The record gives the reactivity of an RNA of 177 nucleotides to DMS and 2A3. It was measured as part of the RMDB library OK2TST. Conditions: 150 mM KOAc, 10 mM MgCl2 and 150 mM bicine (pH 8.5), 24 C. DMS adducts were read by reverse transcription with MarathonRT.
RNA sequence: GGGAACGACUCGAGUAGAGUCGAAAACGCGAACGACCUGGACACCCACACCAAGCCACCGUUCGUCGCAAGGAUGAUCCACAGAUUUGCGGUACCGAUCAUCUUGGUAUGGUUAGCCAUUGCCGUAUGAGUCAAAAUUAUUCGUAAUUUUGACUCAAAAAGAAACAACAACAACAAC
Reactivity to DMS in 0.01 (KOAc 150mM, MgCl2 10mM, bicine 150mM(pH8.5), 24C), signal-to-noise 9, nucleotides 027 to 126: c090g020c050g010a040a040c030g010a060c120c080u000g000g000a080c090a140c090c020c030a070c120a080c040c040a050a060g010c090c070a120c100c020g000u000u000c040g010u000c040g010c060a080a060g000g000a130u000g000a050u010c060c110a100c100a080g000a190u000u010u010g010c010g010g000u000a090c180c070g000a020u000c040a040u000c050u000u000g010g010u010a050u000g010g000u010u000a110g000c030c020a060u000u000g030c010c010g010u000a110
Reactivity to 2A3 in 0.01 (KOAc 150mM, MgCl2 10mM, bicine 150mM(pH8.5), 24C), signal-to-noise 5, nucleotides 027 to 126: c040g020c020g020a040a010c010g010a030c020c020u020g000g000a020c020a060c040c020c010a040c000a020c040c020a060a010g030c020c020a040c020c020g030u050u030c030g030u040c020g000c040a030a020g030g010a020u030g020a030u060c050c030a120c020a130g070a150u060u090u160g030c020g010g020u040a070c030c030g010a030u020c010a010u020c030u020u050g030g010u090a040u080g030g020u040u070a020g020c040c000a060u040u140g000c010c010g090u120a120

Reactivities are rounded to 0.1 and cut off at 0 and 3.